[RMDB]
RNA sequence: GGGAACGACUCGAGUAGAGUCGAAAACAAUGGGCGCAAGCCUGACGGAGCAAUGCCGCGUGCGGGAUGAAGCGUCUUGACGUGUAAACCGCUGUCAGGGGGUCGAACCAAUGAUUGCCCCCAGAGGCUAAGAAUUAAUGUUCGCAUUAAUUCUUAGAAAAGAAACAACAACAACAAC
Reactivity to DMS in 0.01 (KOAc 150mM, MgCl2 10mM, bicine 150mM(pH8.5), 24C), signal-to-noise 8, nucleotides 027 to 126: c060a070a100u000g000g010g010c020g010c110a080a120g010c000c000u000g000a060c050g010g010a150g020c100a120a100u010g020c070c060g010c100g020u010g010c010g010g010g010a030u000g020a250a300g000c020g010u000c060u010u010g020a030c010g010u000g000u000a030a300a290c050c020g010c010u000g010u010c030a060g000g000g000g000g010u010c070g010a050a150c030c040a070a080u010g000a110u000u000g000c040c010c000c040c050a040g010a070g000g000
Reactivity to 2A3 in 0.01 (KOAc 150mM, MgCl2 10mM, bicine 150mM(pH8.5), 24C), signal-to-noise 7, nucleotides 027 to 126: c030a010a120u110g010g000g010c010g000c030a040a010g060c000c000u010g030a010c020g050g030a100g050c040a100a210u210g080c060c040g050c080g040u080g010c000g000g010g000a080u300g020a100a010g010c000g010u020c040u100u160g110a010c000g030u050g000u060a000a000a010c000c000g000c050u050g060u040c040a040g020g010g010g000g010u140c040g050a080a080c050c010a030a020u080g050a050u000u150g000c020c020c000c000c000a030g030a020g080g000

Chemical mapping of a 177-nucleotide RNA with DMS and 2A3.
The DMS profile rests on 9,816 reads.
The RNA was probed in 150 mM KOAc, 10 mM MgCl2 and 150 mM bicine (pH 8.5) at 24 C.